[RMDB]
RNA sequence: GGGAACGACUCGAGUAGAGUCGAAAAAUCGCUAAUCACGGUCUAUGGUAGUUUAAUAAAUAAUUUCUGCAAAAAUUUUCACAUGAGGUUUUUGUCAUGGAAACUAAAAUGCAAUAGAAUUUGGUGCGUCAUAUAGUGAGUUCGCUCACUAUAUGACAAAAGAAACAACAACAACAAC
Reactivity to 2A3 in 0.01 (KOAc 150mM, MgCl2 10mM, bicine 150mM(pH8.5), 24C), signal-to-noise 4, nucleotides 027 to 126: a000u090c030g010c060u040a060a010u050c010a000c040g030g010u000c010u040a030u060g050g020u010a080g030u060u070u060a210a170u120a100a060a090u120a060a080u100u050u050c040u030g010c000a000a060a080a140a190u040u110u130u060c080a200c080a170u210g060a060g070g000u060u080u050u090u180g060u050c040a030u150g000g030a030a000a040c020u080a030a030a080a070u020g010c010a020a030u040a090g050a070a080u120u080u150g060g000u070g020c030
Reactivity to DMS in 0.01 (KOAc 150mM, MgCl2 10mM, bicine 150mM(pH8.5), 24C), signal-to-noise 1, nucleotides 027 to 126: a040u040c030g010c050u010a030a180u010c070a090c010g010g030u010c030u000a010u010g000g000u020a020g000u020u020u050a090a090u070a070a100a120u030a020a030u000u010u000c020u020g000c010a000a030a010a170a000u020u010u010u080c060a180c140a020u010g000a120g030g000u000u000u000u000u000g000u000c050a000u060g010g010a060a020a060c080u010a020a020a060a060u000g010c040a110a060u030a070g000a030a010u000u020u000g010g000u000g020c130

An RNA of 177 nucleotides, treated with 2A3 and DMS and read out base by base. Source: RMDB library OK1LIB, as collected in RNAgym. The reactions ran in a buffer of 150 mM KOAc, 10 mM MgCl2 and 150 mM bicine (pH 8.5), at 24 C. For DMS, 1,515 sequencing reads were counted.